[RMDB]
RNA sequence: GGGAACGACUCGAGUAGAGUCGAAAAGCUUAAUAACCUGAGCUGAGCCCUUCUCCCCCAGCUUGCCUGUGUCCUAGGGAAUUGGAAGGUCAUCCUUCACAGGAUCGUGUGGAAGUCCUGCUCGGGGUCCAAACAUGGUAAUUCGUUACCAUGUUAACACUGAACACUACUUCGGUAGUGUUCAGUGAAAAGAAACAACAACAACAAC
Reactivity to 2A3 in 0.01 (KOAc 150mM, MgCl2 10mM, bicine 150mM(pH8.5), 24C), signal-to-noise 2, nucleotides 027 to 156: g000c010u050u070a060a010u090a220a220c010c050u010g040a000g010c000u000g020a040g040c000c010c000u000u010c110u070c030c020c000c000c000a000g000c010u050u100g090c010c010u020g030u010g060u050c000c050u090a060g010g010g080a090a050u120u080g060g030a050a060g040g030u120c060a090u140c030c020u030u060c030a000c000a050g030g030a080u090c050g030u050g030u090g100g030a070a050g020u040c010c010u000g000c000u010c030g000g000g000g030u000c020c070a040a000a000c000a010u000g000g000u000a010a020u080u030c050g060u020u010a000c000c000a000u000g000u000u000a010a000
Reactivity to DMS in 0.01 (KOAc 150mM, MgCl2 10mM, bicine 150mM(pH8.5), 24C), signal-to-noise 2, nucleotides 027 to 156: g010c030u010u000a110a120u000a100a070c090c040u000g040a040g020c000u000g000a110g000c040c020c070u000u010c050u030c080c030c010c020c030a080g010c020u000u030g020c040c030u000g000u000g010u000c030c040u000a140g060g030g010a100a110u020u020g020g010a100a070g020g020u000c100a120u000c020c000u000u000c070a110c030a070g000g000a050u010c090g050u000g020u000g030g000a130a090g000u000c040c010u000g010c040u000c040g000g010g030g000u000c050c110a100a040a040c000a000u000g000g000u010a010a050u000u000c290g010u000u000a010c000c000a000u000g010u010u010a040a190